[RMDB]
RNA sequence: GGGAACGACUCGAGUAGAGUCGAAAAGAACGCGUGCUGAUGAUAUAAUGUGGAAAGAUGAAGAAGUUAAUGUCGUCCCCAAAAUUGAGGAAGCUGUUGAGCAUAAGCCGGAACGCACGGGAAGAAGAAUGACUACGGAAUUCGUUCCGUAGUCAUUAAAAGAAACAACAACAACAAC
Reactivity to 2A3 in 0.01 (KOAc 150mM, MgCl2 10mM, bicine 150mM(pH8.5), 24C), signal-to-noise 4, nucleotides 027 to 126: g050a060a010c020g000c010g020u010g020c020u000g020a100u040g030a000u120a010u030a120a080u110g030u050g050g070a070a070a120g020a080u130g030a040a040g070a080a010g080u120u110a070a080u090g010u020c020g000u040c020c000c000c020a050a100a050a090u130u110g020a030g010g060a060a020g000c010u020g060u150u100g040a020g000c040a060u050a170a020g010c010c000g000g050a020a010c020g040c050a020c020g010g030g000a060a060g060a010a010g050
Reactivity to DMS in 0.01 (KOAc 150mM, MgCl2 10mM, bicine 150mM(pH8.5), 24C), signal-to-noise 6, nucleotides 027 to 126: g010a070a100c080g020c060g000u010g010c030u000g000a070u000g000a110u020a050u010a060a090u010g010u010g000g010a070a060a070g010a070u010g000a070a050g030a060a090g010u020u010a060a070u040g010u000c020g030u000c020c010c010c040a060a030a080a080u040u040g020a100g000g010a050a110g000c060u000g010u010u000g010a080g000c050a070u020a060a120g000c030c020g020g000a040a070c120g020c030a050c060g000g000g000a070a070g000a070a100g010
The record gives the reactivity of an RNA of 177 nucleotides to 2A3 and DMS. Conditions: 150 mM KOAc, 10 mM MgCl2 and 150 mM bicine (pH 8.5), 24 C. The data come from the RNA Mapping Database (RMDB), library OK1LIB.